This 177-nucleotide RNA was probed chemically with 2A3. High 2A3 reactivity points to a flexible backbone, as in loops and unpaired stretches. For 2A3, 1,406 sequencing reads were counted. The RNA was probed in 150 mM KOAc, 10 mM MgCl2 and 150 mM bicine (pH 8.5) at 24 C.
RNA sequence: GGGAACGACUCGAGUAGAGUCGAAAAGAUAUGGAUCCAAGUGCUCUUGGAUUUAUAGUACAGUGUUCUCAUGUCGGAAACGACAUGAGAACACCGAGGCUAUUGUCAGAGCCUUGGAUCCUAAGUCGCAUUAUAUGGGGUUCGCCCCAUAUAAUGCAAAAGAAACAACAACAACAAC
Reactivity to 2A3 in 0.01 (KOAc 150mM, MgCl2 10mM, bicine 150mM(pH8.5), 24C), signal-to-noise 1, nucleotides 027 to 126: g070a080u130a070u300g000g000a010u010c010c010a030a000g090u140g240c030u000c010u260u300g250g020a020u000u300u030a010u010a000g020u000a010c000a050g020u020g000u020u000c050u010c010a000u000g000u000c030g010g150a030a130a190c060g010a000c020a010u010g060a030g010a000a000c000a000c000c000g030a050g040g030c030u040a050u000u020g040u050c030a010g000a020g080c030c010u020u000g120g000a020u000c000c020u000a010a010g010u040c090